[RMDB]
RNA sequence: GGGAACGACUCGAGUAGAGUCGAAAAGAUAUGGAACGGCGGAUGCCGUUUGACGUUUCUCGGAAACGAGAAACCGAGGAACUACAUUACCGUUCCUAAGUCCAAACUCAAUGUUCGCAUUGAGUAAGACAACAAACCUAUUCGUAGGUUUGUUGUCAAAAGAAACAACAACAACAAC
Reactivity to 2A3 in 0.01 (KOAc 150mM, MgCl2 10mM, bicine 150mM(pH8.5), 24C), signal-to-noise 4, nucleotides 027 to 126: g020a000u120a040u200g000g010a000a000c010g020g070c120g250g020a000u000g020c040c000g030u010u010u020g010a000c000g000u010u010u000c000u000c010g040g020a140a080a040c040g000a020g000a040a010a000c020c000g030a060g260g110a030a000c010u030a000c030a010u000u030a010c010c010g000u000u010c020c000u010a070a020g070u030c030c000a140a070a070c010u000c010a000a020u020g030u060u090c300g020c160a000u010u000g000a000g010u010a020a120
Reactivity to DMS in 0.01 (KOAc 150mM, MgCl2 10mM, bicine 150mM(pH8.5), 24C), signal-to-noise 5, nucleotides 027 to 126: g020a110u000a150u000g010g010a000a010c000g010g010c020g000g020a000u000g020c060c100g010u000u000u000g000a300c300g000u000u000u000c000u000c010g010g020a100a140a170c000g000a020g000a000a010a000c000c020g000a270g000g000a000a010c000u000a080c000a010u000u000a070c010c000g020u000u000c010c000u000a070a140g010u000c000c020a110a150a060c010u000c000a000a010u000g000u000u010c180g010c020a010u000u010g000a010g000u020a040a100
Source: RMDB library TTRDEL, as collected in RNAgym. This 177-nucleotide RNA was probed chemically with 2A3 and DMS. DMS adducts were read by reverse transcription with MarathonRT. The 2A3 profile rests on 9,537 reads. For DMS, 4,716 sequencing reads were counted.